[RMDB]
RNA sequence: GGGAACGACUCGAGUAGAGUCGAAAACAUACGGACUUCGGUCCGUAUGAAAGAACCUCAAAUUGACGCAAACUUCCGCCUCAUCGCGAGGAAGCGAGGAAAAAAUCGAGGUGUUCGCACCUCGAAACUCAUGAACUAUGUUCGCAUAGUUCAUGAGAAAAGAAACAACAACAACAAC
Reactivity to DMS in 0.01 (KOAc 150mM, MgCl2 10mM, bicine 150mM(pH8.5), 24C), signal-to-noise 8, nucleotides 027 to 126: c010a010u000a000c010g000g000a020c000u000u020c170g020g010u000c000c000g010u000a000u000g010a040a080a120g000a130a150c020c000u000c130a050a110a130u010u000g020a140c130g030c090a060a110a120c040u000u000c020c030g000c020c030u010c210a120u000c190g010c110g000a080g010g000a050a070g010c090g010a100g010g010a000a020a060a050a110a070u000c010g000a010g020g020u000g010u000u000c190g010c010a020c010c010u000c000g000a010a030a090
Reactivity to 2A3 in 0.01 (KOAc 150mM, MgCl2 10mM, bicine 150mM(pH8.5), 24C), signal-to-noise 9, nucleotides 027 to 126: c000a000u000a000c000g000g010a000c010u040u080c240g050g000u000c000c000g000u000a000u000g000a000a000a000g040a040a060c010c000u070c060a080a130a120u150u170g080a050c050g010c110a070a130a110c030u050u010c020c020g030c010c020u060c020a160u210c140g050c090g070a030g020g010a030a010g040c050g010a060g000g000a090a090a010a010a000a020u040c010g000a000g000g010u010g010u030u040c240g010c070a000c000c000u010c000g000a010a010a000
Conditions: 150 mM KOAc, 10 mM MgCl2 and 150 mM bicine (pH 8.5), 24 C.
This 177-nucleotide RNA was probed chemically with DMS and 2A3.
It was measured as part of the RMDB library M2PK50.
For DMS the reverse transcriptase was MarathonRT.
For DMS, 10,916 sequencing reads were counted.
Values cover nucleotides 27 to 126.
DMS (dimethyl sulfate) methylates the pairing face of unpaired adenines and cytosines.
For 2A3 the reverse transcriptase was SuperScript II with manganese.